[RMDB]
RNA sequence: GGGAACGACUCGAGUAGAGUCGAAAAGACCAUCUCACAAAAGCUGUUACGUGCUUGUAACACACUACACACUCGUUUUGUAUUCGAGAAGUAGUUGCAACAACGGUCCCCUUAUUGCCUGACAAGCGUAAGCAUUGAUAUUCGUAUCAAUGCUUACAAAAGAAACAACAACAACAAC
Reactivity to 2A3 in 0.01 (KOAc 150mM, MgCl2 10mM, bicine 150mM(pH8.5), 24C), signal-to-noise 9, nucleotides 027 to 126: g030a010c010c010a070u060c070u050c050a130c060a050a120a020a010g030c110u010g010u040u020a020c030g070u100g100c070u080u110g010u020a020a000c010a000c000a000c020u010a000c040a000c000a030c020u000c040g040u020u040u100u230g240u110a220u090u080c010g000a000g010a080a010g000u010a000g000u010u080g010c030a070a070c030a040a030c070g010g010u020c010c010c000c000u040u100a130u100u160g030c010c010u040g030a080c040a110a020g020c020
Reactivity to DMS in 0.01 (KOAc 150mM, MgCl2 10mM, bicine 150mM(pH8.5), 24C), signal-to-noise 9, nucleotides 027 to 126: g000a110c040c030a140u010c070u010c080a110c200a080a050a040a020g010c120u000g000u000u000a020c030g020u010g030c050u000u010g000u000a020a040c030a030c030a040c010u000a010c010a070c200a220c000u000c010g010u010u010u020u030g020u020a160u010u010c000g010a010g000a300a110g020u000a010g010u000u010g020c030a140a080c180a040a110c090g010g000u000c010c010c010c050u000u010a060u010u010g000c010c010u000g010a080c180a080a110g010c150
Structure probing data (2A3 and DMS) for a 177-nucleotide construct. For DMS the reverse transcriptase was MarathonRT. Conditions: 150 mM KOAc, 10 mM MgCl2 and 150 mM bicine (pH 8.5), 24 C. It was measured as part of the RMDB libraries RFM100 and RFMREP. 2A3 adducts were read by reverse transcription with SuperScript II with manganese. Values cover nucleotides 27 to 126.